This 177-nucleotide RNA was probed chemically with DMS.

[RMDB]
RNA sequence: GGGAACGACUCGAGUAGAGUCGAAAAGAUGGAUGAAAACAUCAAGGUUAAGAAUCAUACAAAUACAGUUAUGUUCUAUGUUGUAAGAGAUAGACGUCCGUAUGGUACUCCUCAAGACUUUGGACAGAGAAGGGUUCUAAUUCGUUAGAACCCUUCUAAAAGAAACAACAACAACAAC
Reactivity to DMS in 0.01 (KOAc 150mM, MgCl2 10mM, bicine 150mM(pH8.5), 24C), signal-to-noise 1, nucleotides 027 to 126: g020a030u000g000g000a150u010g000a100a120a180a200c040a000u000c020a060a080g000g000u000u020a080a130g000a090a080u010c050a050u000a020c020a070a070a090u000a080c100a090g000u030u000a010u000g000u000u010c000u010a030u000g000u000u000g020u000a150a020g000a030g000a030u000a020g020a030c050g030u020c140c100g020u000a010u000g000g010u000a060c020u000c030c030u000c130a060a120g000a020c060u000u000u000g000g000a080c230a040g020